[RMDB]
RNA sequence: GGGAACGACUCGAGUAGAGUCGAAAAAGCAAACUCGAACGCCAAUACCUCGAGUUCAACAACAACUGCGGCGACAGUAUCACCAAAGCAGGCUGCGAACUGGAAACCAUCGAAUUCAGCUCAUCAAUCUACAUGAUCCACAACGCAGUCAUGCCGAUGUUAUAUGCACAUUCGUGUGCAUAUAACAAAAAGAAACAACAACAACAAC
Reactivity to 2A3 in 0.01 (KOAc 150mM, MgCl2 10mM, bicine 150mM(pH8.5), 24C), signal-to-noise 8, nucleotides 027 to 156: a000g100c060a040a040a010c020u010c030g030a080a040c070g090c100c070a120a090u150a190c020c030u010c010g030a010g000u070u080c040a090a110c010a030a010c010a010a030c030u030g010c020g150g010c020g080a070c020a020g030u050a070u160c070a050c140c040a050a040a020g020c000a010g020g000c000u000g000c000g010a030a030c010u010g000g020a040a060a070c100c010a050u070c080g060a070a020u170u120c040a070g040c100u050c060a140u070c040a110a130u060c040u130a090c050a090u080g010a040u030c010c010a020c010a080a030c030g000c000a000g000u010c020a090u020g000c010c020g020a010
Reactivity to DMS in 0.01 (KOAc 150mM, MgCl2 10mM, bicine 150mM(pH8.5), 24C), signal-to-noise 3, nucleotides 027 to 156: a110g030c060a070a030a050c030u030c000g020a020a060c070g120c030c010a150a130u000a130c080c020u010c010g020a080g010u000u000c060a130a090c030a090a120c050a040a070c010u000g040c050g000g010c000g020a210c020a090g000u000a300u000c040a040c030c010a040a140a100g050c040a070g010g000c010u000g030c020g010a060a140c080u000g010g000a040a100a120c060c060a060u000c040g020a050a260u000u000c070a040g000c050u000c090a100u000c080a060a060u000c030u000a070c080a050u000g000a070u000c010c010a030c010a070a270c040g000c030a050g000u000c020a030u000g010c000c020g000a140
The data come from the RNA Mapping Database (RMDB), library OK3TST. This 207-nucleotide RNA was probed chemically with 2A3 and DMS. For 2A3 the reverse transcriptase was SuperScript II with manganese.